[RMDB]
RNA sequence: GGGAACGACUCGAGUAGAGUCGAAAAGCUGAGUAUACGAGGUUAGUUCAUUCUGGUAUGCAUGAUUGGACAAAUUAAAAUCUCAAUUUGGAUCAGGGCCUCCCUCCAGCGACGGCCGAACAUACAACCUCUUCCAUUCAUUCGUGAAUGGAAGAGGAAAAGAAACAACAACAACAAC
Reactivity to 2A3 in 0.01 (KOAc 150mM, MgCl2 10mM, bicine 150mM(pH8.5), 24C), signal-to-noise 2, nucleotides 027 to 126: g000c000u010g100a070g220u150a040u020a220c100g020a010g050g040u070u080a030g020u000u040c010a010u090u040c010u030g070g120u290a160u130g150c040a040u100g000a010u000u080g000g020a030c000a010a120a010u200u180a050a100a030a090u070c010u000c010a000a120u030u040u140g190g040a060u070c110a130g010g020g040c000c000u000c020c000c000u050c010c000a010g020c010g070a020c040g000g000c000c000g000a020a030c030a010u160a050c020a060a060
Reactivity to DMS in 0.01 (KOAc 150mM, MgCl2 10mM, bicine 150mM(pH8.5), 24C), signal-to-noise 2, nucleotides 027 to 126: g010c010u000g000a220g030u000a060u020a050c160g010a030g010g050u000u010a110g020u000u000c060a040u010u000c010u010g010g000u010a070u000g020c080a110u020g000a060u000u000g010g000a040c000a060a090a060u000u000a020a090a090a050u020c080u000c060a070a150u000u000u010g000g000a130u000c150a100g010g020g010c040c020u010c010c020c030u000c050c030a030g000c030g000a090c120g000g000c000c000g000a030a080c090a050u000a140c160a090a070
Notes: An RNA of 177 nucleotides, treated with 2A3 and DMS and read out base by base. The reactions ran in a buffer of 150 mM KOAc, 10 mM MgCl2 and 150 mM bicine (pH 8.5), at 24 C.